[RMDB]
RNA sequence: GGGAACGACUCGAGUAGAGUCGAAAAUGCGCUCUGCCGAGCAAACGUGCAGUGGGGGCUGCCAUAGAGAGCAGAGGCGAUGUACACAGCUGAUGGCACGCCGGCAGGGUGAAGCUGUGGUGUGGUGAGUACUCCCAUGGUUCGCCAUGGGAGUACUAAAAGAAACAACAACAACAAC
Reactivity to 2A3 in 0.01 (KOAc 150mM, MgCl2 10mM, bicine 150mM(pH8.5), 24C), signal-to-noise 3, nucleotides 027 to 126: u220g000c080g000c010u030c000u010g000c010c000g070a080g080c070a080a100a000c090g030u080g040c010a050g000u050g030g020g030g040g020c000u010g000c000c020a040u110a060g190a030g010a020g000c020a010g080a040g040g050c010g030a070u100g090u160a030c110a000c030a030g050c000u180g030a200u150g080g000c000a020c080g020c000c000g030g020c010a010g010g060g000u060g030a040a000g000c020u050g000u030g060g080u080g010u050g000g050u070g040
Reactivity to DMS in 0.01 (KOAc 150mM, MgCl2 10mM, bicine 150mM(pH8.5), 24C), signal-to-noise 1, nucleotides 027 to 126: u050g000c090g000c000u000c000u010g020c090c000g020a170g020c080a110a060a170c080g000u080g000c000a050g060u060g000g000g010g000g000c040u000g050c030c050a140u030a220g010a080g000a110g000c050a060g000a200g020g050c000g000a040u050g010u020a070c070a090c110a230g010c000u000g000a090u090g000g000c050a080c040g030c080c010g050g020c120a030g020g020g030u000g000a120a080g000c040u000g000u000g000g010u020g020u000g010g010u000g020
Chemical mapping of a 177-nucleotide RNA with 2A3 and DMS. It was measured as part of the RMDB library OK1LIB. The 2A3 profile rests on 1,631 reads. For 2A3 the reverse transcriptase was SuperScript II with manganese. The reactions ran in a buffer of 150 mM KOAc, 10 mM MgCl2 and 150 mM bicine (pH 8.5), at 24 C.